[RMDB]
RNA sequence: GGGAACGACUCGAGUAGAGUCGAAAAACUGACGGUACGCCGUCAGAACGGUAGAAAAGAUGGUUUGAAAACCACGCCUUCUACCAAUAUAGUAAAUAAAUAGGCGGAGCGGUCAUACGUGACCGCCAAAACAUAUUCAGCUUCGGCUGAAUAUGAAUCAUGAUAAGAAGUUCGCUUCUUAUCAUGAAAAAGAAACAACAACAACAAC
Reactivity to DMS in 0.01 (KOAc 150mM, MgCl2 10mM, bicine 150mM(pH8.5), 24C), signal-to-noise 3, nucleotides 027 to 156: a100c000u000g000a010c010g010g000u010a090c280g020c030c000g030u000c010a010g010a050a030c120g020g010u000a050g010a010a000a010a030g030a020u000g040g000u000u000u010g010a190a110a130a110c000c010a010c010g000c000c000u000u000c010u000a030c000c000a120a140u000a080u010a130g000u000a100a080a100u000a040a090a130u000a130g020g020c020g020g010a300g010c020g000g030u010c020a100u000a030c130g010u000g000a300c010c000g000c000c020a000a040a090a180c020a010u000a010u000u000c000a010g040c000u000u010c300g070g050c030u010g030a020a000u000a000u000g000a080a130
Reactivity to 2A3 in 0.01 (KOAc 150mM, MgCl2 10mM, bicine 150mM(pH8.5), 24C), signal-to-noise 7, nucleotides 027 to 156: a000c000u000g000a000c010g010g010u050a030c220g050c030c010g000u000c000a000g000a050a010c050g010g000u000a010g000a010a010a000a020g060a250u020g000g080u050u100u190g170a180a160a000a000c000c000a000c010g010c000c000u010u020c000u000a000c000c000a020a000u150a010u020a020g080u060a010a060a120u090a040a070a040u160a050g010g000c030g020g020a010g010c020g010g010u030c010a030u040a130c170g070u040g020a050c000c000g000c000c000a000a020a000a000c000a000u000a000u010u000c000a000g000c010u040u130c200g150g000c000u000g000a000a000u000a000u000g000a010a030
The record gives the reactivity of an RNA of 207 nucleotides to DMS and 2A3. For DMS, 4,919 sequencing reads were counted. The reactions ran in a buffer of 150 mM KOAc, 10 mM MgCl2 and 150 mM bicine (pH 8.5), at 24 C. Reactivities are given for positions 27 through 156.